Chemical mapping of a 177-nucleotide RNA with 2A3 and DMS. The 2A3 profile rests on 2,757 reads. Values are in units of 0.01, from 0 to 300, in steps of 10. The data come from the RNA Mapping Database (RMDB), library M2PK50. 2A3 adducts were read by reverse transcription with SuperScript II with manganese.

[RMDB]
RNA sequence: GGGAACGACUCGAGUAGAGUCGAAAAUCUAGUCUAUUCGUAGACUAGAAAAGACUGCUGCCGGCAGGGUUGACUGCGCCGAGCAGAAAGGGCAAAGGAAAAAAACUCUUGCUUUCGAGCAAGAGAACGUAUUAGACAUCUUCGGAUGUCUAAUACGAAAAGAAACAACAACAACAAC
Reactivity to 2A3 in 0.01 (KOAc 150mM, MgCl2 10mM, bicine 150mM(pH8.5), 24C), signal-to-noise 2, nucleotides 027 to 126: u030c000u010a000g000u030c010u000a030u080u050c180g090u030a000g000a010c010u000a000g000a010a020a010a000g000a010c000u020g020c000u000g040c060c020g020g010c000a010g050g050g040u220u300g120a130c010u060g010c040g000c030c000g040a030g000c000a000g030a130a120a010g030g020g010c050a050a060a100g140g010a110a050a030a010a020a030a090c000u000c000u000u010g000c000u070u040u100c200g050a000g000c000a000a000g000a010g000a000a000
Reactivity to DMS in 0.01 (KOAc 150mM, MgCl2 10mM, bicine 150mM(pH8.5), 24C), signal-to-noise 3, nucleotides 027 to 126: u000c000u000a000g000u000c000u000a030u000u020c160g010u000a000g020a020c000u000a000g000a020a060a120a120g000a110c030u000g010c000u000g010c040c020g020g010c020a300g000g000g000u020u010g000a210c010u020g010c120g010c030c010g000a100g010c010a010g010a010a070a040g000g000g000c100a090a050a080g010g030a000a020a060a060a120a090a120c000u000c000u000u000g010c000u000u000u010c190g020a010g020c000a000a000g000a000g000a010a070